This 177-nucleotide RNA was probed chemically with 2A3 and DMS. Source: RMDB library OK1LIB, as collected in RNAgym. High 2A3 reactivity points to a flexible backbone, as in loops and unpaired stretches. Conditions: 150 mM KOAc, 10 mM MgCl2 and 150 mM bicine (pH 8.5), 24 C. The 2A3 profile rests on 2,866 reads.
[RMDB]
RNA sequence: GGGAACGACUCGAGUAGAGUCGAAAAGCACGUCGUUACGACGACGUGCAAGAAAACAAAAGGAGUGGCGAGCGUUGGCCACAGUGAAUCAAACAACGCAAAAGCAUGGUGGUACGCCACCAUGCAAUAAUGCGCAGCAUUUCGAUGCUGCGCAUUAAAAAGAAACAACAACAACAAC
Reactivity to 2A3 in 0.01 (KOAc 150mM, MgCl2 10mM, bicine 150mM(pH8.5), 24C), signal-to-noise 2, nucleotides 027 to 126: g010c000a010c010g000u000c000g000u000u080a070c300g000a000c000g010a000c010g130u010g000c000a000a000g010a000a080a000a010c110a020a090a050a000g200g090a210g020u010g000g000c040g040a110g010c000g050u000u000g000g000c000c000a000c020a000g040u080g120a000a060u150c080a010a000a110c000a020a000c000g030c000a110a000a000a000g000c000a000u010g000g060u010g010g050u110a010c220g010c010c000a000c000c000a000u000g060c000a000a000
Reactivity to DMS in 0.01 (KOAc 150mM, MgCl2 10mM, bicine 150mM(pH8.5), 24C), signal-to-noise 2, nucleotides 027 to 126: g020c010a000c000g040u020c000g010u000u080a160c230g000a110c000g030a000c000g030u000g010c010a060a060g020a120a140a110a110c180a160a010a140a080g050g020a040g030u030g010g000c000g000a050g070c010g000u000u000g000g040c000c000a000c000a210g000u000g020a080a030u060c190a000a020a040c000a000a000c050g050c020a080a060a160a170g010c000a000u000g000g020u040g000g030u000a080c300g010c050c000a000c000c000a000u000g000c010a030a000